[RMDB]
RNA sequence: GGGAACGACUCGAGUAGAGUCGAAAACGGCUUGGCCGGUGUCGCCUCCGUGCGACGUAAACCGUCGUGUGACAUAUAACCAUCAGGAGGGUUAUACGAGUCGGGUACUGCCGACUCGGGCCUUGCCUCUAGCGUUCCGCUUCGGUGGGACGCUAGAAAAAGAAACAACAACAACAAC
Reactivity to 2A3 in 0.01 (KOAc 150mM, MgCl2 10mM, bicine 150mM(pH8.5), 24C), signal-to-noise 5, nucleotides 027 to 126: c030g010g010c010u020u030g010g000c000c010g090g010u030g000u000c040g020c010c010u000c020c040g040u040g000c000g000a000c000g000u030a110a050a020c110c000g010u000c000g000u020g020u020g020a000c010a010u000a000u000a010a030c010c010a030u120c020a010g050g040a020g020g010g010u010u010a020u010a010c000g000a000g000u000c000g000g000g010u080a100c040u100g080c000c000g000a000c000u000c000g000g000g000c000c000u000u010g030c000c010
Reactivity to DMS in 0.01 (KOAc 150mM, MgCl2 10mM, bicine 150mM(pH8.5), 24C), signal-to-noise 5, nucleotides 027 to 126: c110g010g000c020u010u000g010g010c000c010g050g010u000g010u010c040g000c030c070u020c060c090g020u030g000c000g000a000c000g000u030a080a150a170c220c000g000u000c010g020u000g020u020g010a050c020a100u000a030u000a030a010c030c010a080u020c110a100g000g000a140g010g000g000u010u000a020u000a000c020g000a020g000u000c000g000g010g010u030a130c230u020g000c000c000g000a000c000u000c010g010g000g010c010c000u000u000g010c010c000